[RMDB]
RNA sequence: GGGAACGACUCGAGUAGAGUCGAAAAGAUAUGGAGCUGCGAUAAGUUGCCAUCGGAAACGAUGGGCAACUUUUGACGCAGACUCCUAAGUCAAACUAUAAGGAAUCCUUCGGGAUUCCUUAUAGAAGUUAGAGUAAGGGUUCGCCCUUACUCUAACAAAAGAAACAACAACAACAAC
Reactivity to 2A3 in 0.01 (KOAc 150mM, MgCl2 10mM, bicine 150mM(pH8.5), 24C), signal-to-noise 2, nucleotides 027 to 126: g010a010u070a080u100g020g000a010g020c010u020g010c010g060a060u030a230a040g010u010u020g000c010c000a000u010c010g000g000a120a030a010c020g020a000u070g110g070g000c010a000a010c000u010u000u030u080g030a020c030g000c010a060g050a300c000u000c000c000u010a040a010g030u000c020a030a060a150c010u000a000u000a020a000g000g000a010a010u000c040c000u060u190c300g050g000g000a000u000u000c010c000u000u000a010u000a000g000a010a020
Reactivity to DMS in 0.01 (KOAc 150mM, MgCl2 10mM, bicine 150mM(pH8.5), 24C), signal-to-noise 4, nucleotides 027 to 126: g020a040u000a300u000g010g000a020g020c010u000g000c000g010a130u010a030a020g020u010u000g000c000c010a030u000c000g000g000a120a080a150c010g010a000u000g010g020g010c000a000a010c000u000u000u000u010g010a170c060g010c000a000g000a090c000u000c000c000u010a010a090g000u000c030a130a140a270c000u000a000u010a000a000g010g000a010a000u000c000c000u000u020c200g030g010g000a010u000u000c010c000u000u000a000u000a000g010a090a100